The record gives the reactivity of an RNA of 177 nucleotides to DMS and 2A3. Values cover nucleotides 27 to 126. For 2A3 the reverse transcriptase was SuperScript II with manganese. Source: RMDB library OK1LIB, as collected in RNAgym. The reactions ran in a buffer of 150 mM KOAc, 10 mM MgCl2 and 150 mM bicine (pH 8.5), at 24 C.

[RMDB]
RNA sequence: GGGAACGACUCGAGUAGAGUCGAAAAACGUUGACAUUGCCGUAUUGAUCAACCUCAGCAAAGCUAAGAUAGGCAACUGAUACACCAUUGUUAUAAAUAAAAUCCCAUGCUCGAUCAUGAGGCAUGCUCUACACGGAAACUUCGGUUUCCGUGUAGAAAAAGAAACAACAACAACAAC
Reactivity to DMS in 0.01 (KOAc 150mM, MgCl2 10mM, bicine 150mM(pH8.5), 24C), signal-to-noise 2, nucleotides 027 to 126: a000c210g010u000u010g000a080c110a080u000u020g000c010c000g000u010a180u000u110g000a000u030c030a090a130c150c090u040c100a100g040c000a020a100a200g010c150u010a180a080g000a100u040a080g000g000c000a120a050c050u040g010a040u000a060c070a080c050c040a210u040u020g000u000u040a100u050a020a010a150u080a100a030a020a030u010c000c000c000a060u020g020c070u000c190g020a000u030c030a020u010g000a130g000g000c050a000u010g000c080
Reactivity to 2A3 in 0.01 (KOAc 150mM, MgCl2 10mM, bicine 150mM(pH8.5), 24C), signal-to-noise 3, nucleotides 027 to 126: a010c040g000u010u080g020a050c060a120u010u110g020c000c030g150u270a010u000u040g000a020u000c020a030a070c010c060u060c030a020g000c070a060a030a000g000c000u140a110a030g060a210u110a080g080g000c040a060a020c010u010g020a010u030a100c050a020c030c070a020u070u130g040u190u130a170u160a140a100a030u130a070a090a030a100u050c000c000c000a040u100g040c040u070c100g010a060u020c000a020u060g020a030g000g000c010a010u050g030c010